[RMDB]
RNA sequence: GGGAACGACUCGAGUAGAGUCGAAAAUGUCCACAUCUCCAGCAAACCGUGUGACCUGCACUGUACCACCGUGGACGGCCAGCGGCAGCUCAUGGUCCCCGCCCGCGACGGCACAUCCUGCAAGCUCACUAAUUAUUAGUUUCGACUAAUAAUUAGUAAAAGAAACAACAACAACAAC
Reactivity to DMS in 0.01 (KOAc 150mM, MgCl2 10mM, bicine 150mM(pH8.5), 24C), signal-to-noise 9, nucleotides 027 to 126: u000g010u000c010c020a080c080a090u000c040u000c030c040a080g020c080a080a090a100c070c060g010u000g010u000g010a090c100c040u000g010c030a070c060u000g000u000a110c070c050a080c080c080g030u010g000g010a060c050g010g000c090c030a070g010c070g010g010c050a050g010c040u000c040a070u000g010g010u000c030c030c020c050g010c040c010c030g020c060g000a060c080g000g010c030a030c070a060u000c030c020u000g010c090a070a100g000c080u000c100
Reactivity to 2A3 in 0.01 (KOAc 150mM, MgCl2 10mM, bicine 150mM(pH8.5), 24C), signal-to-noise 7, nucleotides 027 to 126: u110g010u010c010c000a020c010a070u050c040u010c030c010a030g010c050a110a070a110c020c030g040u040g030u050g140a150c010c030u050g000c030a030c050u050g030u100a090c010c030a030c010c060g050u060g040g020a060c020g010g020c020c010a030g020c060g050g000c020a020g000c010u020c050a070u080g040g010u030c010c000c000c010g020c010c010c010g030c020g020a040c020g010g000c020a010c000a080u030c000c000u030g010c030a060a020g020c020u030c040
Annotation: This 177-nucleotide RNA was probed chemically with DMS and 2A3. DMS adducts were read by reverse transcription with MarathonRT.